The record gives the reactivity of an RNA of 207 nucleotides to 2A3. It was measured as part of the RMDB library OK3TST.

[RMDB]
RNA sequence: GGGAACGACUCGAGUAGAGUCGAAAACAAGAGAUUAUCAAGUUCUCUAUGACCAAGACCUUAUUAUUUGACACUUUGCUUUAUCCUUGGUAUUAGAAGAAAUAAAAUAUGACACAGGAAAUGAAAAACAAAGAAAUUAAACAUCCCAUUGAUGGACCUGUGCAUCCUUUUUCGAAAGGAUGCACAGAAAAGAAACAACAACAACAAC
Reactivity to 2A3 in 0.01 (KOAc 150mM, MgCl2 10mM, bicine 150mM(pH8.5), 24C), signal-to-noise 1, nucleotides 027 to 156: c040a000a000g030a010g000a020u030u130a070u300c130a150a060g040u170u000c000u010c000u060a040u130g040a070c010c030a030a020g120a070c040c070u150u130a100u120u030a100u070u190u280g040a030c010a010c050u060u040u080g030c010u110u120u090a080u070c000c000u020u050g050g000u010a040u010u010a070g000a170a020g000a000a040a040u060a110a130a020a030u070a040u220g090a000c000a000c000a300g060g080a030a070a070u180g050a010a050a200a000a000c020a030a020a090g110a060a150a000u070u080a150a050a000c020a030u000c070c040c000a050u070u070g090a060u030g090g000a020c000